[RMDB]
RNA sequence: GGGAACGACUCGAGUAGAGUCGAAAAACUCCACCAGCGAUACGUCGCUGGUGGAGAAUCUUGCUGCAACAUCACAGUGACCACAUAGGCCAGUCAAUGUGAGCACUGCGAUGUGGUAUUAAGAUAAUAUCGCCACAGGUUUCGACCUGUGGCGAUAAAAAGAAACAACAACAACAAC
Reactivity to 2A3 in 0.01 (KOAc 150mM, MgCl2 10mM, bicine 150mM(pH8.5), 24C), signal-to-noise 1, nucleotides 027 to 126: a040c000u040c000c000a000c000c010a000g030c020g010a000u000a040c250g100u000c020g000c000u010g000g000u010g000g000a000g020a000a000u000c000u000u030g000c000u000g030c020a040a010c000a000u000c000a020c000a000g010u000g100a300c000c000a020c000a030u040a000g030g220c080c040a080g130u180c030a040a000u030g020u000g000a010g040c010a010c000u000g000c030g000a000u000g040u020g000g000u000a030u030u000a020a000g000a000u020a050a050

The record gives the reactivity of an RNA of 177 nucleotides to 2A3. 2A3 adducts were read by reverse transcription with SuperScript II with manganese. The data come from the RNA Mapping Database (RMDB), library RFM100. The RNA was probed in 150 mM KOAc, 10 mM MgCl2 and 150 mM bicine (pH 8.5) at 24 C.